[RMDB]
RNA sequence: GGGAACGACUCGAGUAGAGUCGAAAAUCGCUCGAACCUGGGACCAACGUGACCGGCUCAACAUGACACACGAGGUUGUGACCCAGUACUAUAGAGCCCCGGAGUUGUUAAUGGGCGCGCGAAGGUACAGUAUAAUCCUAUUCGUAGGAUUAUACUGAAAAGAAACAACAACAACAAC
Reactivity to DMS in 0.01 (KOAc 150mM, MgCl2 10mM, bicine 150mM(pH8.5), 24C), signal-to-noise 9, nucleotides 027 to 126: u010c090g020c020u000c020g010a100a110c140c010u010g010g010g010a160c110c030a050a080c060g010u010g000a110c100c050g010g000c040u000c030a080a070c100a080u000g000a080c080a070c040a100c060g010a140g010g010u000u000g010u010g000a100c030c010c010a060g000u000a060c120u000a120u010a180g000a060g000c010c030c020c030g020g010a200g000u000u000g010u000u010a100a090u000g010g000g010c030g000c080g010c040g000a070a070g010g010u000a110
Reactivity to 2A3 in 0.01 (KOAc 150mM, MgCl2 10mM, bicine 150mM(pH8.5), 24C), signal-to-noise 6, nucleotides 027 to 126: u030c010g000c010u010c020g060a110a100c010c000u030g020g020g040a030c020c020a040a040c030g040u070g090a080c060c000g070g000c020u020c030a050a150c040a160u150g060a020c010a000c010a010c130g080a100g170g000u110u030g050u070g030a050c000c000c000a010g010u030a020c030u060a030u080a080g030a010g000c010c000c000c010g020g010a090g020u060u090g020u050u050a090a070u150g020g030g000c040g000c010g010c030g040a040a020g080g030u070a070
This 177-nucleotide RNA was probed chemically with DMS and 2A3.
The RNA was probed in 150 mM KOAc, 10 mM MgCl2 and 150 mM bicine (pH 8.5) at 24 C.
The data come from the RNA Mapping Database (RMDB), library OK2TRN.
For 2A3, 10,922 sequencing reads were counted.